[RMDB]
RNA sequence: GGGAACGACUCGAGUAGAGUCGAAAAAGGAAUAUGCAGAGUGUUGUCCACCUGCUGGCAUGACAGAGGUGGUGAUGAUCCUGUCAUGACUACAAUCUAGGUGAAAGUUCCAUCUACAUUCGAGGUCUUCAGUAUGGACACAUGGACUGAUGGCACGGUGUGCCGCAAUGUUCGCAUUGCGGCACACAAAAGAAACAACAACAACAAC
Reactivity to 2A3 in 0.01 (KOAc 150mM, MgCl2 10mM, bicine 150mM(pH8.5), 24C), signal-to-noise 1, nucleotides 027 to 156: a000g160g000a020a000u070a040u250g000c000a000g040a040g030u050g000u100u110g000u020c080c000a040c050c020u050g000c050u000g070g000c010a000u030g010a030c010a000g030a140g090g010u090g010g050u110g030a080u100g030a000u040c000c000u000g070u020c000a000u000g050a070c010u010a000c170a080a090u020c010u170a020g000g000u090g020a050a050a050g020u110u000c010c000a000u040c030u040a050c010a020u000u100c100g050a060g090g020u010c020u000u100c000a040g020u130a130u300g010g000a010c000a010c020a050u040g100g000a040c000u010g000a010u010g000g050c020a020c120g020
This 207-nucleotide RNA was probed chemically with 2A3. Values cover nucleotides 27 to 156. The RNA was probed in 150 mM KOAc, 10 mM MgCl2 and 150 mM bicine (pH 8.5) at 24 C.